The record gives the reactivity of an RNA of 177 nucleotides to DMS. It was measured as part of the RMDB library TTRINS. Conditions: 150 mM KOAc, 10 mM MgCl2 and 150 mM bicine (pH 8.5), 24 C. Reactivities are given for positions 27 through 126.
RNA sequence: GGGAACGACUCGAGUAGAGUCGAAAAGAUAUGGAUGUGAUAUCUGUUGCCACCUGCGGGAGCGGUCCAUCGGAAACGAUGGGUCGCGACGAUCGCAGGGUGGCAACAGAUAUCACAUCCUAAGUCACAGUGUUACUAACUUCGGUUAGUAACACUGAAAAGAAACAACAACAACAAC
Reactivity to DMS in 0.01 (KOAc 150mM, MgCl2 10mM, bicine 150mM(pH8.5), 24C), signal-to-noise 1, nucleotides 027 to 126: g000a060u000a300u010g020g000a030u010g030u020g010a010u000a000u000c000u000g020u020u000g000c000c020a020c000c000u000g020c040g010g000g030a030g060c010g030g000u000c010c000a010u000c000g020g000a120a160a230c000g000a020u000g020g010g000u000c000g020c000g000a020c300g000a020u020c000g000c010a010g010g010g060u000g020g010c010a010a000c000a000g010a020u000a020u010c000a000c000a000u000c000c000u000a000a110g020u020c050a260